RNA sequence: GGGAACGACUCGAGUAGAGUCGAAAAGGCACUCCCUUAGCCAUCCGAGUGGACGUUGUCCUCCUUCGGAUGCCCAGGUCGGACCGCGGGGAGGUGGAGAUGCCAUGCCGACCCGAAGAGGAAAGAAUAAGGCUAUGGUUCGCCAUAGCCAAAAGAAACAACAACAACAAC
Reactivity to DMS in 0.01 (KOAc 150mM, MgCl2 10mM, bicine 150mM(pH8.5), 24C), signal-to-noise 8, nucleotides 027 to 129: g000g010c080a130c050u020c020c020c040u000u050a140g020c140c010a020u020c000c000g030a070g030u030g000g000a050c090g020u040u040g030u000c040c040u030c000c060u040u020c030g000g000a030u000g020c040c040c000a030g000g010u020c080g000g000a140c050c030g040c060g000g020g000g030a060g010g070u000g010g030a060g000a120u010g000c040c040a090u020g000c030c020g030a060c000c020c070g020a090a050g000a060g000g000a100a070a080g020a070a040u070a110a120
Reactivity to 2A3 in 0.01 (KOAc 150mM, MgCl2 10mM, bicine 150mM(pH8.5), 24C), signal-to-noise 9, nucleotides 027 to 129: g030g000c040a020c060u040c000c000c020u020u100a030g020c010c000a010u000c000c010g010a050g060u070g010g020a060c170g160u100u200g030u100c020c020u030c020c040u070u050c000g000g000a000u010g000c000c010c000a030g010g050u040c020g030g020a050c030c000g010c050g010g010g010g010a030g000g010u040g030g020a120g000a030u130g030c010c000a030u120g000c000c000g020a050c000c000c020g020a070a040g030a050g040g040a070a030a020g070a030a060u220a150a050